[RMDB]
RNA sequence: GGGAACGACUCGAGUAGAGUCGAAAAUGCUGACACACCUUUUUGGCUGGAGGCAUGAGCUUCUCCCUGUGUCUUGCCUCUCCUGUAACUCCACAGCUCAAAUACCUUCCAUGGCUCCCCAUGGCCCAGAUUUAAGGGCAAGCUGCCUCGUCUGGCAGUAUAUCACUAAGUUCGCUUAGUGAUAUACAAAAGAAACAACAACAACAAC
Reactivity to DMS in 0.01 (KOAc 150mM, MgCl2 10mM, bicine 150mM(pH8.5), 24C), signal-to-noise 4, nucleotides 027 to 156: u000g020c010u000g020a280c030a070c060a100c020c010u000u000u000u000u000g050g040c080u000g000g030a300g020g010c040a080u010g000a150g010c040u000u000c050u000c010c020c040u000g040u010g020u010c020u000u000g020c020c020u010c020u000c020c030u000g020u000a070a070c030u010c020c020a080c060a100g000c020u000c060a080a070a170u000a060c030c010u000u000c030c020a100u010g020g010c040u000c070c020c000c030a070u000g010g000c040c010c010a160g000a200u000u000u000a060a080g030g000g000c020a050a080g010c040u000g000c000c020u000c100g020u000c020u000g020g040c040a120
Reactivity to 2A3 in 0.01 (KOAc 150mM, MgCl2 10mM, bicine 150mM(pH8.5), 24C), signal-to-noise 8, nucleotides 027 to 156: u050g010c020u050g050a010c010a010c010a050c060c040u080u120u050u160u230g090g000c080u040g020g020a010g020g010c030a040u060g020a020g030c030u090u050c020u070c020c010c020u060g030u010g020u040c030u020u060g020c000c010u040c010u040c010c030u070g060u120a080a060c020u030c050c030a050c020a060g010c010u020c060a060a100a040u150a070c010c010u070u050c020c030a060u070g050g010c030u090c030c030c000c000a020u030g050g000c020c010c010a040g000a080u110u180u150a090a100g020g000g000c020a020a020g060c050u070g010c010c000u050c020g070u030c030u020g000g000c000a000